[RMDB]
RNA sequence: GGGAACGACUCGAGUAGAGUCGAAAAAAUAGCGGGUCAAGGUACAACGCAGAGAGAUAGGCUCAUCCCAAGUUCUCUUCCGAGUACCAAGACUUCGGUACAGAAGAGAUACCGACUCUUCAUAGAAGGUCAUUAAAGAGUUCGCUCUUUAAUGACCAAAAGAAACAACAACAACAAC
Reactivity to DMS in 0.01 (KOAc 150mM, MgCl2 10mM, bicine 150mM(pH8.5), 24C), signal-to-noise 2, nucleotides 027 to 126: a080a050u000a010g000c040g020g010g020u000c000a050a240g010g000u000a050c060a010a270c300g000c140a050g000a030g000a030g010a040u010a120g000g000c030u010c300a080u010c290c000c010a050a140g010u010u010c010u000c000u000u010c030c000g020a300g000u000a010c000c000a020a260g000a060c060u000u000c040g000g010u010a040c190a180g000a040a030g000a020g030a040u010a180c080c030g000a050c040u000c010u030u000c010a130u000a130g000a080a100
Reactivity to 2A3 in 0.01 (KOAc 150mM, MgCl2 10mM, bicine 150mM(pH8.5), 24C), signal-to-noise 1, nucleotides 027 to 126: a010a010u170a030g050c020g000g000g000u010c000a000a050g000g000u020a010c010a020a020c040g000c030a000g010a000g020a010g010a020u060a160g030g000c010u030c090a090u120c050c000c030a030a020g080u050u010c010u000c000u030u020c030c010g000a030g010u000a010c000c000a010a010g000a000c000u070u050c010g010g010u030a060c030a040g010a010a000g000a020g020a010u070a130c000c030g020a040c000u020c000u050u020c010a010u030a040g160a120a050
This 177-nucleotide RNA was probed chemically with DMS and 2A3. The data come from the RNA Mapping Database (RMDB), library M2PK90. The 2A3 profile rests on 1,735 reads. The RNA was probed in 150 mM KOAc, 10 mM MgCl2 and 150 mM bicine (pH 8.5) at 24 C.